[RMDB]
RNA sequence: GGGAACGACUCGAGUAGAGUCGAAAAGGGAAUGGUGGUUUACCCCGUUAUCAAAUGAUUACCGACCAAUAAUUGGCGAAACUCGUUUCGCGUUGGCUGCCUAAUUCAAGGAUUUAGCGUGCCUUCAAAGACAUCAAGAAGUUCGCUUCUUGAUGAACCGAUCUUUAAGGUUCGCCUUAAAGAUCGGAAAAGAAACAACAACAACAAC
Reactivity to 2A3 in 0.01 (KOAc 150mM, MgCl2 10mM, bicine 150mM(pH8.5), 24C), signal-to-noise 5, nucleotides 027 to 156: g050g000g020a080a090u120g020g030u040g000g040u040u060u160a100c010c010c010c000g080u060u060a130u120c070a050a070a100u180g010a010u080u040a030c030c030g050a080c020c070a030a040u200a130a080u090u120g060g010c020g010a040a020a050c050u070c100g070u020u030u010c010g000c010g000u020u010g010g000c040u050g020c000c020u030a030a030u090u080c070a110a070g120g020a040u020u040u030a050g030c060g030u020g000c000c000u010u010c020a080a000a040g090a040c000a000u000c010a000a000g000a000a000g010u020u130c190g050c130u000u000c010u000u000g000a000u000g000a010a000
Reactivity to DMS in 0.01 (KOAc 150mM, MgCl2 10mM, bicine 150mM(pH8.5), 24C), signal-to-noise 2, nucleotides 027 to 156: g010g020g010a070a060u000g010g020u000g000g010u000u000u000a120c020c010c000c020g030u000u010a090u010c120a060a110a070u000g000a130u000u010a040c000c000g020a070c020c020a070a100u010a060a200u000u010g030g020c000g000a030a080a060c060u000c120g010u000u000u000c030g030c030g010u010u000g020g000c050u000g000c040c020u000a030a060u010u010c060a060a170g030g010a150u000u010u000a080g020c060g040u010g000c010c000u000u000c040a050a100a130g040a160c020a030u000c010a030a040g000a030a020g010u000u010c300g030c010u000u000c000u000u000g020a010u000g000a050a110

Structure probing data (2A3 and DMS) for a 207-nucleotide construct. For 2A3 the reverse transcriptase was SuperScript II with manganese. The reactions ran in a buffer of 150 mM KOAc, 10 mM MgCl2 and 150 mM bicine (pH 8.5), at 24 C. Reactivities are given for positions 27 through 156.